[RMDB]
RNA sequence: GGGAACGACUCGAGUAGAGUCGAAAAAGUUUAGAUUUCGAUCUAAACUAGACCACUAAGAGGAAGACGAGUGACUACGACGCAUCUAGUAGAAUGCGCCCAGCUGUGAGCAGUUCGCUGCUCACAAACGUACUAUAUCGUUCGCGAUAUAGUACGUAAAAGAAACAACAACAACAAC
Reactivity to DMS in 0.01 (KOAc 150mM, MgCl2 10mM, bicine 150mM(pH8.5), 24C), signal-to-noise 9, nucleotides 027 to 126: a030g010u000u000u000a000g000a010u000u000u010c180g010a030u000c000u000a000a000a010c000u000a070g000a190c020c010a120c160u010a080a100g010a070g000g000a070a040g000a060c070g000a060g010u000g000a090c090u000a080c100g010a100c040g010c020a020u000c020u000a110g010u000a090g010a070a040u000g000c030g000c020c020c090a100g010c170u000g010u000g000a010g010c000a010g010u000u010c220g010c010u000g000c000u000c000a000c010a010a050
Reactivity to 2A3 in 0.01 (KOAc 150mM, MgCl2 10mM, bicine 150mM(pH8.5), 24C), signal-to-noise 9, nucleotides 027 to 126: a000g010u010u000u000a010g000a020u060u060u090c240g050a010u000c000u010a000a000a000c000u000a020g040a030c010c020a020c060u080a110a050g040a020g130g030a060a030g050a050c040g020a020g050u050g030a040c020u050a040c110g080a020c010g000c010a010u000c030u060a050g050u030a030g140a190a040u040g010c010g040c020c010c010a040g030c080u060g000u000g000a000g000c000a000g000u020u090c190g020c090u000g000c000u000c000a000c000a000a010

The record gives the reactivity of an RNA of 177 nucleotides to DMS and 2A3.
The reactions ran in a buffer of 150 mM KOAc, 10 mM MgCl2 and 150 mM bicine (pH 8.5), at 24 C.
DMS adducts were read by reverse transcription with MarathonRT.
It was measured as part of the RMDB library M2PK50.
Reactivities are given for positions 27 through 126.
For DMS, 27,349 sequencing reads were counted.